Chemical mapping of a 177-nucleotide RNA with DMS and 2A3. Values are in units of 0.01, from 0 to 300, in steps of 10. The data come from the RNA Mapping Database (RMDB), library OK1LIB.
RNA sequence: GGGAACGACUCGAGUAGAGUCGAAAAAUGUUGCAGCGGCACAUCUUGCCUCUUUCUUUGUUUUACCACAGUCAUAAGGAAACAUGUGACCGUCAAUUAUUACAGCUCCUAAAAAUAGUGGACAGUGAUCGAACAGGUAGUUCGCUACCUGUUCGAUAAAAGAAACAACAACAACAAC
Reactivity to DMS in 0.01 (KOAc 150mM, MgCl2 10mM, bicine 150mM(pH8.5), 24C), signal-to-noise 2, nucleotides 027 to 126: a040u000g000u010u010g000c130a080g000c030g000g010c040a050c030a070u000c100u000u010g000c030c040u000c070u020u000u040c040u000u000u000g000u020u000u030u020a150c150c090a050c060a120g000u000c050a040u010a040a090g010g020a030a000a050c110a000u020g010u020g000a110c010c050g010u000c030a050a020u000u070a040u010u000a070c170a190g020c070u000c010c010u000a000a070a050a000a110u030a060g010u040g000g010a040c160a080g000u030g030
Reactivity to 2A3 in 0.01 (KOAc 150mM, MgCl2 10mM, bicine 150mM(pH8.5), 24C), signal-to-noise 2, nucleotides 027 to 126: a000u070g000u060u070g040c030a050g020c010g030g020c010a000c000a030u030c000u020u140g090c000c000u050c000u030u110u000c010u030u180u080g080u070u250u040u090a070c080c000a010c000a050g010u050c040a060u020a260a000g040g020a000a110a080c030a050u050g050u040g070a170c000c000g000u060c020a100a130u120u200a060u140u050a040c050a010g030c020u050c000c010u020a100a000a000a030a030u120a080g060u080g050g000a020c060a090g100u010g060